Structure probing data (2A3 and DMS) for a 177-nucleotide construct.
2A3 adducts were read by reverse transcription with SuperScript II with manganese.
It was measured as part of the RMDB library OK2TRN.
For DMS the reverse transcriptase was MarathonRT.
RNA sequence: GGGAACGACUCGAGUAGAGUCGAAAACAGCUCACAACUCGGUAUUAACGACGGCAAAGUGAAUGUGGUGAAGAGUGAUGAAAACCAGCUUGCCACCGGAGAUGAUGGGUUCCUCGGGCCGUUUGUCUAAUCGUAAGAGCUUCGGCUCUUACGAUUAAAAAGAAACAACAACAACAAC
Reactivity to 2A3 in 0.01 (KOAc 150mM, MgCl2 10mM, bicine 150mM(pH8.5), 24C), signal-to-noise 1, nucleotides 027 to 126: c000a010g000c010u000c010a070c050a000a000c040u030c030g000g060u090a100u120u070a260a030c050g090a020c000g070g030c020a010a150a000g070u090g140a170a150u220g020u050g120g070u040g050a150a040g090a040g120u140g070a220u130g140a030a000a050a050c020c020a010g030c010u010u030g060c000c000a050c020c020g080g020a050g000a030u080g000a030u030g000g060g000u050u020c010c010u020c000g020g030g030c000c050g060u000u020u030g050u020c010
Reactivity to DMS in 0.01 (KOAc 150mM, MgCl2 10mM, bicine 150mM(pH8.5), 24C), signal-to-noise 2, nucleotides 027 to 126: c200a200g020c060u000c010a140c120a070a050c020u000c030g030g000u000a080u000u010a020a290c050g010a070c070g050g010c050a030a070a070g000u030g000a100a110u020g020u020g000g000u000g000a100a080g040a130g010u010g010a160u000g000a110a080a110a070c050c020a130g000c030u000u000g020c040c010a080c020c060g010g010a230g010a080u000g010a180u010g000g000g000u000u010c180c010u000c040g000g010g020c010c030g010u000u000u000g010u000c040